[RMDB]
RNA sequence: GGGAACGACUCGAGUAGAGUCGAAAAACUGAUAUUAAUAUAAAAAUAGAUGUACACGUUCAACGACUAGCGAGUGAUGUAAAUCAGUCAAAUAAUCUCGCCACGAGCGCCCGACAUCUUGAUAUUUCUAUCUAGACUGAUUCGUCAGUCUAGAUAGAAAAGAAACAACAACAACAAC
Reactivity to 2A3 in 0.01 (KOAc 150mM, MgCl2 10mM, bicine 150mM(pH8.5), 24C), signal-to-noise 2, nucleotides 027 to 126: a010c070u100g010a080u140a190u300u170a120a080u210a050u120a220a040a060a040a100u110a030g000a000u010g010u020a030c000a000c030g010u040u020c040a160a100c090g210a060c080u040a000g000c010g030a000g030u010g020a040u050g030u110a000a090a140u070c030a110g190u040c010a000a050a000u070a090a090u050c000u010c000g020c000c010a070c080g010a010g010c000g000c130c030c050g040a000c010a000u000c000u040u000g070a000u000a050u160u010u000